[RMDB]
RNA sequence: GGGAACGACUCGAGUAGAGUCGAAAAUUCUUCUUCCAUCGAUCCACUUUCCGAGUGCCUCUUCUCUCCCCCUCCGGGUUCUCCUCGCAUCGGACUGGCUCAUUCUCGGAGAGGGCGGACGGUCCUGCAAGUCUGGCGUUCGCGCCAGACAAAAGAAACAACAACAACAAC
Reactivity to 2A3 in 0.01 (KOAc 150mM, MgCl2 10mM, bicine 150mM(pH8.5), 24C), signal-to-noise 3, nucleotides 027 to 129: u050u000c020u060u010c040u070u030c030c020a080u080c040g040a080u080c000c010a040c060u040u060u030c010c000g020a010g010u040g050c040c000u060c000u070u030c000u010c000u060c000c010c000c000c000u000c000c010g060g000g000u050u010c040u010c000c010u010c050g040c000a090u050c040g040g000a020c000u050g030g000c000u060c070a100u160u030c000u000c050g000g000a020g000a000g000g010g000c030g010g000a000c010g000g040u020c020c010u040g050c020a130a020
Reactivity to DMS in 0.01 (KOAc 150mM, MgCl2 10mM, bicine 150mM(pH8.5), 24C), signal-to-noise 4, nucleotides 027 to 129: u020u010c020u040u040c040u040u060c090c030a100u010c090g050a110u000c000c020a160c060u040u020u030c090c100g030a060g000u020g020c060c050u030c090u010u010c020u020c030u000c020c010c030c020c060u010c030c090g040g010g000u030u030c030u020c020c030u000c000g030c130a120u030c040g010g020a090c080u060g000g000c040u020c080a100u040u020c050u000c000g030g000a070g020a070g080g000g060c060g030g040a080c060g000g000u020c030c010u060g020c160a150a070